Annotation
This 207-nucleotide RNA was probed chemically with 2A3. Source: RMDB library RNAMAK, as collected in RNAgym.

RNA sequence: GGGAACGACUCGAGUAGAGUCGAAAAGGGGUCGAUGGAUCACUUGGAUUUAAGUUAGAGGUACAGCUGAAGCCUCCACGGCUGUACUACCCACCUAACUUUGUCAGUGAUCUAAAUCGACGGAGGCACCCAAAACCGAACUCUUCGGAGUUCGGAAUCGAAUCGAAAGGUUCGCCUUUCGAUUCGAAAAAGAAACAACAACAACAAC
Reactivity to 2A3 in 0.01 (KOAc 150mM, MgCl2 10mM, bicine 150mM(pH8.5), 24C), signal-to-noise 1, nucleotides 027 to 156: g030g010g020g030u030c030g000a010u010g010g010a000u000c010a030c070u240u300g240g010a060u290u300u080a020a000g000u000u010a000g000a030g010g010u030a000c000a010g010c010u010g000a060a000g000c030c000u000c000c000a000c030g010g000c000u000g000u000a000c000u010a010c020c060c000a030c000c000u000a000a000c020u000u000u000g060u040c200a060g000u000g020a000u020c000u030a070a110a020u010c000g000a000c030g000g000a000g000g000c000a000c000c010c000a060a070a010a050c000c000g000a000a000c000u010c000u090u100c300g130g000a000g000u000u000c010g000g000a000a070
Conditions: 150 mM KOAc, 10 mM MgCl2 and 150 mM bicine (pH 8.5), 24 C.